This 177-nucleotide RNA was probed chemically with DMS. The data come from the RNA Mapping Database (RMDB), library OK2TRN.

[RMDB]
RNA sequence: GGGAACGACUCGAGUAGAGUCGAAAAUCACUCAUGCCAUUAAAAGAUCAACGCAUUAUGGCAACAGUUAUUUAGACGGACAUAGAGUCCAUAAUGCAUUCGUAAAUAGAAACUAUACUGUUAAAUAUGCAACCUAUCAUUUCGAUGAUAGGUUGCAAAAAGAAACAACAACAACAAC
Reactivity to DMS in 0.01 (KOAc 150mM, MgCl2 10mM, bicine 150mM(pH8.5), 24C), signal-to-noise 1, nucleotides 027 to 126: u000c090a060c040u000c100a070u000g000c010c050a040u000u000a010a060a110a160g010a100u010c100a160a110c050g040c040a020u000u000a000u000g010g000c070a140a010c090a040g010u000u000a110u010u000u000a190g000a090c160g000g010a050c090a150u000a110g000a100g010u010c000c000a070u000a040a000u000g000c100a090u040u010c110g040u000a140a090a090u000a060g000a050a030a110c050u000a010u010a100c070u000g000u010u000a050a010a070u000a090
Values cover nucleotides 27 to 126.